[RMDB]
Background
The data come from the RNA Mapping Database (RMDB), library OK2TST. Structure probing data (2A3 and DMS) for a 177-nucleotide construct. DMS adducts were read by reverse transcription with MarathonRT. The RNA was probed in 150 mM KOAc, 10 mM MgCl2 and 150 mM bicine (pH 8.5) at 24 C. As a SHAPE reagent, 2A3 marks flexible, mostly unpaired nucleotides at the ribose 2'-OH. Values are in units of 0.01, from 0 to 300, in steps of 10.
RNA sequence: GGGAACGACUCGAGUAGAGUCGAAAAGAUCUUCGCCGUCGACACCACGACCGGCGCGUCGUCGCAAAGAGCGCGGAUGAUCGCGGGAACCAGAUACGCCAGCGACUUGCCGGUUCCGGUGCCGGCCCUUGUGUGAGAGGUUCGCCUCUCACACAAGAAAAGAAACAACAACAACAAC
Reactivity to 2A3 in 0.01 (KOAc 150mM, MgCl2 10mM, bicine 150mM(pH8.5), 24C), signal-to-noise 2, nucleotides 027 to 126: g060a070u110c070u130u110c120g070c070c040g030u060c020g010a030c010a000c010c010a010c090g000a010c010c000g000g020c000g000c000g040u040c020g040u040c000g030c080a110a130a060g090a080g050c030g030c040g040g040a150u250g040a090u250c010g000c060g080g000g020a020a060c040c020a070g030a200u110a080c090g000c050c030a010g030c000g030a020c000u020u050g000c010c000g000g000u060u020c040c050g010g000u010g000c000c000g000g010c010c010
Reactivity to DMS in 0.01 (KOAc 150mM, MgCl2 10mM, bicine 150mM(pH8.5), 24C), signal-to-noise 2, nucleotides 027 to 126: g030a190u010c050u010u000c080g000c040c060g000u000c030g030a070c080a060c000c030a130c300g000a020c010c000g000g000c030g040c300g000u010c120g010u000c140g030c060a110a070a030g020a160g020c040g010c000g030g010a230u000g000a060u000c030g000c080g010g000g000a100a120c050c040a060g000a120u000a050c060g010c050c050a160g000c010g010a010c090u010u010g010c000c000g000g000u000u000c300c140g020g010u000g000c020c000g000g020c030c140